[RMDB]
RNA sequence: GGGAACGACUCGAGUAGAGUCGAAAAGAAGAGCAGUCAGAUAAUCUUGUGCAGAAUGAAUGCUCGUAACUCCAUGGCACAAGUAGAUGUAGAUAACUUUAAUCUCUCAUAGCGGAGGAGCCGCAGAACCGAUAAUAGCUUUCGAGCUAUUAUCGGUAAAAGAAACAACAACAACAAC
Reactivity to DMS in 0.01 (KOAc 150mM, MgCl2 10mM, bicine 150mM(pH8.5), 24C), signal-to-noise 7, nucleotides 027 to 126: g010a080a090g000a030g010c020a040g000u010c030a110g010a160u040a090a110u010c010u000u000g000u010g020c010a090g000a070a080u000g010a040a060u010g000c020u000c060g010u020a070a120c060u010c020c020a080u020g010g010c000a010c020a010a020g010u010a060g000a080u020g010u000a040g000a060u020a060a100c130u020u030u020a070a100u010c030u000c020u000c040a090u020a120g000c030g010g000a130g010g000a090g000c030c020g020c040a110g010a090
Reactivity to 2A3 in 0.01 (KOAc 150mM, MgCl2 10mM, bicine 150mM(pH8.5), 24C), signal-to-noise 9, nucleotides 027 to 126: g100a040a010g020a010g020c020a010g050u090c020a010g040a180u150a120a090u100c020u020u020g010u020g010c030a020g060a190a060u050g040a080a030u020g060c010u010c010g010u030a040a050c020u010c040c000a060u080g060g000c000a000c000a030a010g020u050a020g030a050u100g080u130a020g020a070u060a090a020c020u080u060u160a120a100u020c010u000c010u010c060a120u100a090g030c000g010g000a070g040g040a010g110c010c000g000c020a020g040a040
This 177-nucleotide RNA was probed chemically with DMS and 2A3. The reactions ran in a buffer of 150 mM KOAc, 10 mM MgCl2 and 150 mM bicine (pH 8.5), at 24 C.